Structure probing data (DMS and 2A3) for a 170-nucleotide construct.
RNA sequence: GGGAACGACUCGAGUAGAGUCGAAAACUUUUUGAAAGAGGAGACUGCUGGACCAAACGCCCGAACCGGGAUGAGCCGCAUGCCGGGCGGGAGGGACGAGGUCGGGGAAGGGGAGACCCCGAGGAGGAGACUGUGUAGUUCGCUACACAGAAAAGAAACAACAACAACAAC
Reactivity to DMS in 0.01 (KOAc 150mM, MgCl2 10mM, bicine 150mM(pH8.5), 24C), signal-to-noise 9, nucleotides 027 to 129: c090u020u050u050u040u020g020a060a050a070g000a050g000g000a100g020a030c050u030g030c050u040g070g000a080c030c040a060a150a140c080g030c000c000c010g040a110a130c080c010g010g000g030a060u030g010a070g010c070c020g010c100a060u040g030c020c010g000g040g020c090g030g020g000a110g000g010g000a090c070g000a080g000g020u010c060g020g010g000g040a070a040g040g000g010g010a050g000a070c050c040c010c040g000a060g020g010a040g000g000a060g020a090
Reactivity to 2A3 in 0.01 (KOAc 150mM, MgCl2 10mM, bicine 150mM(pH8.5), 24C), signal-to-noise 9, nucleotides 027 to 129: c020u090u080u030u110u270g120a090a060a020g050a010g040g030a020g020a060c020u040g050c030u050g080g000a030c030c010a150a150a030c040g010c010c010c010g030a070a040c020c020g000g010g020a050u050g030a010g060c010c030g030c050a020u110g070c010c000g010g020g020c070g020g010g010a100g000g010g010a010c040g030a020g020g050u050c040g010g000g000g010a030a060g040g010g000g000a020g020a010c010c000c000c010g010a030g000g010a020g010g010a010g010a020
As a SHAPE reagent, 2A3 marks flexible, mostly unpaired nucleotides at the ribose 2'-OH. The data come from the RNA Mapping Database (RMDB), library 15KLIB. For 2A3 the reverse transcriptase was SuperScript II with manganese.